RNA sequence: GGGAACGACUCGAGUAGAGUCGAAAAGAUAUGGAGGCCCGAUUACCACGUUUGACGUCGGAAACGACCGAGUGGUUAUCGAUUUCGUGCCUCCUAAGUCAAACAGCGCUCCUUCGGGAGCGCUGAAGUAUCCUUCUACCUUCGGGUAGAAGGAUACAAAAGAAACAACAACAACAAC
Reactivity to DMS in 0.01 (KOAc 150mM, MgCl2 10mM, bicine 150mM(pH8.5), 24C), signal-to-noise 2, nucleotides 027 to 126: g000a010u000a300u010g000g000a000g000g000c000c040c000g000a010u010u010a010c000c020a000c010g010u000u000u000g020a140c300g000u010c000g010g000a130a120a180c010g000a010c000c010g000a030g030u000g000g000u000u010a070u000c050g000a170u000u000u000c250g010u030g000c010c000u010c000c000u000a000a050g010u000c030a110a080a200c010a000g000c020g040c000u010c000c020u000u020c230g030g030g000a020g020c010g000c000u000g000a010a050
Reactivity to 2A3 in 0.01 (KOAc 150mM, MgCl2 10mM, bicine 150mM(pH8.5), 24C), signal-to-noise 1, nucleotides 027 to 126: g020a020u080a060u160g000g000a000g000g040c010c000c030g010a000u020u020a000c010c030a000c040g060u070u180u240g070a040c000g010u040c010g030g110a080a100a070c000g000a010c010c020g030a050g040u000g000g040u010u000a010u020c020g000a060u070u300u210c150g000u220g010c000c020u000c010c000u000a000a000g020u010c020a120a030a100c010a010g010c040g000c000u050c040c000u090u190c300g080g020g030a020g040c000g000c000u000g010a010a010

Chemical mapping of a 177-nucleotide RNA with DMS and 2A3.
The DMS profile rests on 1,090 reads.
For DMS the reverse transcriptase was MarathonRT.
High DMS reactivity at an A or C suggests that its Watson-Crick edge is free.
The data come from the RNA Mapping Database (RMDB), library TTRDEL.
2A3 is a SHAPE reagent: it acylates the 2'-hydroxyl of flexible nucleotides of all four kinds.